Record summary:
Structure probing data (2A3 and DMS) for a 177-nucleotide construct. Values cover nucleotides 27 to 126. The RNA was probed in 150 mM KOAc, 10 mM MgCl2 and 150 mM bicine (pH 8.5) at 24 C. For DMS, 7,699 sequencing reads were counted.

[RMDB]
RNA sequence: GGGAACGACUCGAGUAGAGUCGAAAAAGACGGCGAAUGCUACGGCAAGCCGCAUACUCCUGAAGUGGCAUUUGAGCGGAUUAAGCGAAUGAGCGGAAAAACUGGAGAAUUGUUUACUGGCCAUUGCAGCGUAUAAAUCAUUCGUGAUUUAUACGCUAAAAGAAACAACAACAACAAC
Reactivity to 2A3 in 0.01 (KOAc 150mM, MgCl2 10mM, bicine 150mM(pH8.5), 24C), signal-to-noise 3, nucleotides 027 to 126: a000g070a040c010g010g040c020g060a240a060u080g000c020u040a020c050g050g000c000a050a000g000c000c000g000c010a040u100a080c030u020c010c000u060g040a110a000g060u040g060g000c040a050u020u040u110g050a040g030c020g000g010a030u180u080a090a000g000c030g040a050a030u110g020a030g010c030g010g020a070a110a010a000a000c020u020g000g070a080g030a110a090u070u030g040u010u040u040a090c040u050g110g000c030c010a060u050u140g060c070
Reactivity to DMS in 0.01 (KOAc 150mM, MgCl2 10mM, bicine 150mM(pH8.5), 24C), signal-to-noise 6, nucleotides 027 to 126: a150g020a140c030g010g000c020g000a090a090u000g010c010u000a070c150g030g020c030a070a140g020c020c020g020c070a070u000a100c090u000c020c010u000g010a100a090g020u010g000g000c030a080u000u000u000g000a100g010c050g000g000a100u010u000a070a120g040c020g010a060a050u000g000a130g010c030g000g010a060a060a030a080a060c100u010g000g000a100g010a100a070u000u000g000u000u000u000a080c050u000g000g000c030c030a080u000u000g010c170
It was measured as part of the RMDB library OK2TST.